[RMDB]
RNA sequence: GGGAACGACUCGAGUAGAGUCGAAAACUCAAUCACUACGGUGAUUGAGAAUGCUUACGCCUCAAUGAAGCUUGAGUGGAGUGCCUCAAGCAGAUAUAGACUGAAACAUUUAGUAUGGUCAAGCAGGGAGCAACAGCUCGAGUACGCUCGAGCUGAACCUCCUAGUACGAUUCGUCGUACUAGGAGGAAAAGAAACAACAACAACAAC
Reactivity to 2A3 in 0.01 (KOAc 150mM, MgCl2 10mM, bicine 150mM(pH8.5), 24C), signal-to-noise 4, nucleotides 027 to 156: c000u000c000a000a000u000c000a000c000u040a030c300g100g010u010g000a010u000u000g000a000g010a030a050u080g000c020u020u010a060c070g050c000c010u080c060a070a140u150g060a110a010g020c000u010u000g010a020g000u080g020g080a060g040u060g020c000c000u000c000a000a020g000c020a010g050a000u140a010u040a030g040a030c040u070g040a070a140a010c020a030u090u170u050a060g040u040a040u170g040g000u020c020a030a000g030c040a020g060g010g030a050g020c020a020a090c000a010g010c000u000c000g010a000g010u030a050c250g000c040u000c000g010a010g000c000u000g010a000a000
Reactivity to DMS in 0.01 (KOAc 150mM, MgCl2 10mM, bicine 150mM(pH8.5), 24C), signal-to-noise 1, nucleotides 027 to 156: c000u000c020a000a000u000c000a000c080u000a100c300g170g020u020g020a000u000u030g000a010g010a010a030u000g010c030u000u000a110c140g010c050c020u000c050a070a150u010g010a210a170g000c010u000u000g020a120g000u010g080g010a210g080u000g020c170c010u000c040a040a050g000c000a010g010a130u000a140u000a010g020a090c000u000g020a140a110a030c080a100u010u010u000a110g020u000a100u020g000g000u000c000a080a170g000c030a120g010g080g010a070g000c090a100a160c010a010g000c000u020c000g000a010g020u000a140c210g050c000u000c000g000a010g050c000u000g010a020a070